Chemical mapping of a 207-nucleotide RNA with DMS and 2A3.
For 2A3, 1,201 sequencing reads were counted.
For DMS, 1,838 sequencing reads were counted.
DMS adducts were read by reverse transcription with MarathonRT.
RNA sequence: GGGAACGACUCGAGUAGAGUCGAAAAUGUGACUAUUCAGCAUUACUUGCUUUUACAUUGCCAUUAUUUGUAAAGCUUUGAUUAAAAGUGCUUGAACAGUGAAUAUCUUUGCAGGAAAAUUAAAUCAAGUUUUAAGUCAAAUGCUAUCCUGAUAGAAGGUGGUCAUAAUAUUCGUAUUAUGACCACCAAAAGAAACAACAACAACAAC
Reactivity to DMS in 0.01 (KOAc 150mM, MgCl2 10mM, bicine 150mM(pH8.5), 24C), signal-to-noise 1, nucleotides 027 to 156: u000g030u000g010a120c000u000a070u000u000c030a100g000c010a080u000u000a090c110u000u000g030c000u010u010u000u000a030c070a070u010u000g030c040c230a200u000u010a090u000u010u000g030u010a040a050a060g010c000u010u010u000g040a260u020u000a000a060a140a080g010u010g020c030u000u000g010a030a040c030a030g060u000g020a170a120u010a090u000c040u010u000u000g010c030a030g000g000a070a090a060a130u000u000a010a050a010u000c010a100a160g010u040u000u000u000a010a080g010u000c050a060a120a100u020g000c030u000a160u010c010c020u000g030a100u000a070g010a160a260
Reactivity to 2A3 in 0.01 (KOAc 150mM, MgCl2 10mM, bicine 150mM(pH8.5), 24C), signal-to-noise 3, nucleotides 027 to 156: u160g010u030g050a020c020u010a050u040u050c020a010g010c020a010u020u050a070c050u030u020g000c010u100u020u010u070a020c010a000u020u060g050c060c030a170u190u190a180u070u250u050g060u060a030a030a000g020c000u070u130u080g060a080u030u080a090a040a060a020g040u030g010c010u080u090g030a050a000c020a060g020u030g120a060a030u060a050u110c040u050u090u190g020c010a030g020g090a070a150a050a060u140u170a030a030a080u110c020a030a010g020u060u080u060u180a080a020g070u050c020a030a030a000u110g000c000u060a050u130c000c020u060g050a090u170a110g080a070a030